Record summary: An RNA of 207 nucleotides, treated with 2A3 and read out base by base. Conditions: 150 mM KOAc, 10 mM MgCl2 and 150 mM bicine (pH 8.5), 24 C. Values cover nucleotides 27 to 156. For 2A3, 527 sequencing reads were counted. Source: RMDB library ARCHII, as collected in RNAgym.
RNA sequence: GGGAACGACUCGAGUAGAGUCGAAAAAUGGAUUCGACAGGGGUCCCCCGAGCUCAUUAAGCGUGUCGGAGGGUUGUCUUCGUCAUCAACACACACAGUUUAUAAUAACUGGCAAAUCAAACAAUAAUUUCGCAGUAGCUGCCUAAUCGCACUCUGCCCUUAUUGCAAACUUCGGUUUGCAAUAAGGAAAAGAAACAACAACAACAAC
Reactivity to 2A3 in 0.01 (KOAc 150mM, MgCl2 10mM, bicine 150mM(pH8.5), 24C), signal-to-noise 1, nucleotides 027 to 156: a020u040g040g000a030u110u000c080g050a070c100a120g040g000g050g070u030c010c010c000c010c000g010a040g000c030u110c090a150u120u210a080a040g000c000g020u090g060u100c000g020g000a040g010g060g000u210u090g000u060c000u030u000c000g050u020c000a020u010c040a030a000c000a000c000a000c000a000c000a120g000u000u150u000a260u030a300a080u150a000a000c000u020g030g020c030a080a050a030u120c150a150a040a190c030a080a060u080a100a090u030u090u140c030g000c020a020g010u200a000g000c050u030g030c000c000u030a070a080u140c020g000c010a010c010u000c000u000g050c040